[RMDB]
About this RNA
Chemical mapping of a 177-nucleotide RNA with DMS and 2A3. Source: RMDB library OK2TST, as collected in RNAgym. Values cover nucleotides 27 to 126. The RNA was probed in 150 mM KOAc, 10 mM MgCl2 and 150 mM bicine (pH 8.5) at 24 C. 2A3 adducts were read by reverse transcription with SuperScript II with manganese. DMS adducts were read by reverse transcription with MarathonRT.
RNA sequence: GGGAACGACUCGAGUAGAGUCGAAAAACGUCGGUGACCUUGAGUUGGCCGGCCGCCUGCGCACGCAGGCCCGCGGCAUGUGAUACCUGCAGAAAGAACAAUUGUGUUGCCGCGACCAACAUCAACAGAUUUAGCACUAAUUCGUUAGUGCUAAAUCAAAAGAAACAACAACAACAAC
Reactivity to DMS in 0.01 (KOAc 150mM, MgCl2 10mM, bicine 150mM(pH8.5), 24C), signal-to-noise 9, nucleotides 027 to 126: a130c120g010u010c050g010g020u000g010a070c040c030u000u000g010a250g010u000u000g030g020c020c010g020g010c070c150g010c010c000u000g010c010g020c240a110c220g000c010a020g000g010c020c080c030g010c010g010g010c010a070u010g010u010g010a120u010a100c120c050u000g010c070a090g020a080a100a100g000a080a070c110a060a110u000u000g010u000g020u000u000g000c010c010g000c030g000a150c040c030a050a050c110a080u000c090a060a080c230a110
Reactivity to 2A3 in 0.01 (KOAc 150mM, MgCl2 10mM, bicine 150mM(pH8.5), 24C), signal-to-noise 8, nucleotides 027 to 126: a000c050g030u050c030g000g020u020g030a030c010c000u100u140g100a140g170u030u030g130g010c000c000g010g000c000c010g000c000c000u010g010c080g010c030a080c150g000c000a000g000g000c000c000c010g030c000g000g000c010a030u050g030u050g110a080u100a220c020c030u060g040c040a040g190a090a160a010g070a070a030c030a090a090u070u070g040u020g040u090u050g010c000c000g000c010g010a010c020c000a040a060c030a140u170c030a020a060c020a070